[RMDB]
This 207-nucleotide RNA was probed chemically with 2A3 and DMS. As a SHAPE reagent, 2A3 marks flexible, mostly unpaired nucleotides at the ribose 2'-OH. DMS (dimethyl sulfate) methylates the pairing face of unpaired adenines and cytosines. The DMS profile rests on 9,696 reads. The RNA was probed in 150 mM KOAc, 10 mM MgCl2 and 150 mM bicine (pH 8.5) at 24 C. DMS adducts were read by reverse transcription with MarathonRT. Values cover nucleotides 27 to 156. It was measured as part of the RMDB library M2RFOK. For 2A3, 1,895 sequencing reads were counted.
RNA sequence: GGGAACGACUCGAGUAGAGUCGAAAAACAUGCUGGCCAACCCAACCCCACGAUCCUCCAUCGGCAUGAUCAGGAUGUGUUCUCAAAUAUCAGGCCAGUAAAUCACCAUGCUCGUGCUGGUAAAGGCAACUUAUGCCCAAGUUCGCUUGGGCAUAAACAAAAAGGAAGAAUUCGUUCUUCCUUUUUGAAAAGAAACAACAACAACAAC
Reactivity to 2A3 in 0.01 (KOAc 150mM, MgCl2 10mM, bicine 150mM(pH8.5), 24C), signal-to-noise 3, nucleotides 027 to 156: a000c020a010u040g000c000u000g010g000c000c000a040a030c090c030c010a040a090c020c000c010c010a040c060g030a030u040c010c010u040c030c020a050u040c030g070g000c070a060u080g000a030u010c020a010g020g000a010u020g040u010g020u040u020c060u000c020a070a060a010u210a110u160c100a050g000g000c000c000a000g010u010a000a050a050u070c010a000c030c010a040u120g020c010u010c050g070u050g010c030u030g000g010u040a100a090a040g060g000c040a070a020c050u010u000a010u030g000c000c000c000a010a020g010u040u090c080g020c110u030u000g020g000g000c000a000u000a000a010a000
Reactivity to DMS in 0.01 (KOAc 150mM, MgCl2 10mM, bicine 150mM(pH8.5), 24C), signal-to-noise 3, nucleotides 027 to 156: a050c040a090u010g020c010u000g020g010c010c030a120a180c060c030c040a130a100c060c030c020c010a110c110g000a090u000c010c000u000c050c030a040u000c050g030g010c040a060u010g010a070u000c020a050g020g020a050u010g020u000g000u000u010c060u000c060a070a060a130u000a110u000c110a130g030g040c000c010a040g020u000a020a070a110u000c030a030c010c010a060u010g030c030u000c030g010u000g010c020u000g010g030u000a040a090a090g020g010c050a060a090c070u010u000a020u000g000c000c000c000a020a040g020u000u010c300g030c020u000u000g010g000g010c010a000u000a000a000a130